An RNA of 177 nucleotides, treated with DMS and read out base by base.

RNA sequence: GGGAACGACUCGAGUAGAGUCGAAAAGAUAUGGAGCCAUACGAGUCGAUGGAUCGGAAACGAUCCACGACGAUGAGUAUGGAACUACUCCUAAGUCAAAACCUAAAGUCCUUCGGGACUUUAGGAAGGCCCAUGUUAUGUUCGCAUAACAUGGGCCAAAAGAAACAACAACAACAAC
Reactivity to DMS in 0.01 (KOAc 150mM, MgCl2 10mM, bicine 150mM(pH8.5), 24C), signal-to-noise 1, nucleotides 027 to 126: g000a010u000a300u010g000g000a010g010c000c000a010u030a000c010g000a300g000u000c000g010a190u000g000g000a000u000c000g030g000a090a050a120c000g000a000u000c010c000a000c040g000a030c010g000a040u010g020a300g020u010a000u040g000g000a000a000c040u020a300c000u000c020c000u000a050a120g000u000c030a070a060a160a130c000c000u000a000a010a000g000u000c000c000u000u040c250g010g000g010a000c000u030u000u000a020g000g000a120a030

It was measured as part of the RMDB library TTRDEL.
The RNA was probed in 150 mM KOAc, 10 mM MgCl2 and 150 mM bicine (pH 8.5) at 24 C.